[RMDB]
The record gives the reactivity of an RNA of 177 nucleotides to DMS and 2A3. For DMS the reverse transcriptase was MarathonRT. Conditions: 150 mM KOAc, 10 mM MgCl2 and 150 mM bicine (pH 8.5), 24 C. For 2A3 the reverse transcriptase was SuperScript II with manganese.

RNA sequence: GGGAACGACUCGAGUAGAGUCGAAAAUAUCAUUGAGAAAACAAUGUGUCUGGAAUUAAUGGGGUUCUUAUAAAGAAGGUUCCCAGAAAAGAAUGUUCAUCCAGCCUCCUCAGAAACAGAACAUUCAUCCUGAAGGUAAAUUCGUUUACCUUCAGGAAAAAGAAACAACAACAACAAC
Reactivity to DMS in 0.01 (KOAc 150mM, MgCl2 10mM, bicine 150mM(pH8.5), 24C), signal-to-noise 4, nucleotides 027 to 126: u010a110u000c010a020u010u000g000a260g000a150a110a130a300c010a010a020u000g000u000g000u010c020u000g020g010a030a100u000u020a090a140u000g010g010g000g020u000u000c010u000u000a130u010a080a130a110g000a020a030g010g000u010u000c000c000c000a040g000a080a060a110a090g000a030a000u000g010u000u000c000a060u000c000c000a020g010c220c090u010c020c020u000c170a060g000a040a030a090c210a200g000a000a020c000a020u000u000c010a190
Reactivity to 2A3 in 0.01 (KOAc 150mM, MgCl2 10mM, bicine 150mM(pH8.5), 24C), signal-to-noise 2, nucleotides 027 to 126: u050a020u090c020a010u030u030g020a100g140a210a200a010a020c010a000a040u020g030u030g040u040c000u000g020g110a170a110u100u080a140a120u160g030g000g020g000u030u020c010u060u180a250u090a280a230a000g110a030a010g040g000u020u050c000c030c000a010g020a000a110a000a020g030a000a010u000g010u000u010c010a010u000c000c000a020g050c020c010u010c000c030u210c010a030g040a070a060a050c040a030g000a010a030c010a000u010u000c030a030